This 177-nucleotide RNA was probed chemically with DMS. DMS adducts were read by reverse transcription with MarathonRT. Source: RMDB library M2PK50, as collected in RNAgym.
RNA sequence: GGGAACGACUCGAGUAGAGUCGAAAAUGUGGGGACUUCGGUCCCCACAAUAACGAGGAGCGGUUGGCCUCCUAAAAAGCCGCAAACUACGAAAGUAGAAAACACACGUCGAGUUCGCUCGACGUAAUUCCAUCUGUUGAUUCGUCAACAGAUGGAAAAAAGAAACAACAACAACAAC
Reactivity to DMS in 0.01 (KOAc 150mM, MgCl2 10mM, bicine 150mM(pH8.5), 24C), signal-to-noise 2, nucleotides 027 to 126: u000g030u000g040g040g020g000a020c000u000u000c160g030g000u000c000c000c000c040a000c010a000a030u010a070a130c130g030a090g000g000a060g000c010g000g000u000u000g020g030c050c000u020c000c140u000a000a030a000a020a040g010c040c020g050c000a170a100a210c010u010a000c000g010a130a080a200g000u000a000g000a120a030a090a110c190a060c140a060c000g010u000c000g000a010g030u010u010c220g000c010u010c020g000a010c010g010u000a000a070

The RNA was probed in 150 mM KOAc, 10 mM MgCl2 and 150 mM bicine (pH 8.5) at 24 C.